Chemical mapping of a 177-nucleotide RNA with DMS and 2A3.
The reactions ran in a buffer of 150 mM KOAc, 10 mM MgCl2 and 150 mM bicine (pH 8.5), at 24 C.
Reactivities are given for positions 27 through 126.
2A3 adducts were read by reverse transcription with SuperScript II with manganese.
The data come from the RNA Mapping Database (RMDB), library OK2TRN.
For DMS, 1,982 sequencing reads were counted.
RNA sequence: GGGAACGACUCGAGUAGAGUCGAAAACUGUUGACGAAGCCGUCGCGCUGCUACGUACUGCCGAAGGUGAAGACCCCGAGCUCGUCAGCUUCAUCACGCUGUACCCCGAUCAAGCGCAAGCAGGGGAGCCCAGUAGAUGAUUCGUCAUCUACUGGGCAAAAGAAACAACAACAACAAC
Reactivity to DMS in 0.01 (KOAc 150mM, MgCl2 10mM, bicine 150mM(pH8.5), 24C), signal-to-noise 3, nucleotides 027 to 126: c070u010g040u000u000g050a060c050g010a050a160g030c040c050g020u000c060g030c210g000c030u010g010c070u000a080c160g010u000a080c040u020g000c040c060g010a080a120g040g000u000g010a060a080g010a120c040c010c030c050g010a100g010c010u000c020g010u010c040a050g010c030u010u000c030a050u010c050a060c090g000c040u000g030u010a130c030c010c000c040g010a150u010c170a110a100g010c030g020c100a110a110g020c030a190g000g020g000g030a080
Reactivity to 2A3 in 0.01 (KOAc 150mM, MgCl2 10mM, bicine 150mM(pH8.5), 24C), signal-to-noise 1, nucleotides 027 to 126: c020u090g080u150u100g040a020c020g040a040a010g020c020c030g010u060c030g000c030g010c040u090g000c020u050a050c070g100u060a100c030u090g000c040c000g130a160a050g010g020u090g020a050a010g040a070c000c010c020c010g000a020g020c010u010c030g030u020c040a020g000c000u030u010c020a080u050c000a010c040g000c020u080g020u220a100c000c000c000c010g080a090u160c080a160a040g020c020g000c090a050a020g020c000a020g020g000g000g010a000